[RMDB]
RNA sequence: GGGAACGACUCGAGUAGAGUCGAAAAGUUACCCAUUUCGAUGGGUAACACACCGAACUCAGAAGUGAAACGCCCUAGCGCCGAUGGUAGUGUGGGGUCAAAGCUGUAGACCUUUCGAGGUCUACAACACCAGUCGGUUAUUCGUAACCGACUGGUGAAAAGAAACAACAACAACAAC
Reactivity to DMS in 0.01 (KOAc 150mM, MgCl2 10mM, bicine 150mM(pH8.5), 24C), signal-to-noise 2, nucleotides 027 to 126: g010u000u020a020c010c000c000a000u010u010u010c190g020a010u000g000g000g010u000a010a000c000a090c090a180c050c000g010a080a120c160u000c090a090g010a130a080g050u010g000a000a110a200c260g010c000c010c010u000a240g010c020g020c010c020g000a090u030g020g020u000a020g060u010g060u000g000g000g010g050u000c150a020a060a130g000c070u000g010u010a010g010a010c010c000u000u000u000c110g020a010g000g000u000c010u000a000c010a020a060
Reactivity to 2A3 in 0.01 (KOAc 150mM, MgCl2 10mM, bicine 150mM(pH8.5), 24C), signal-to-noise 2, nucleotides 027 to 126: g010u010u000a010c000c020c030a000u060u090u080c190g110a000u030g030g000g030u000a020a000c010a000c000a020c000c020g050a110a040c030u030c160a150g090a300a040g120u140g140a140a030a060c060g000c020c030c000u010a040g020c010g050c060c060g270a240u210g030g060u130a300g020u040g050u130g050g020g030g020u020c050a050a040a000g000c050u030g000u000a010g000a000c000c020u050u110u070c180g060a000g010g020u000c000u010a010c000a000a010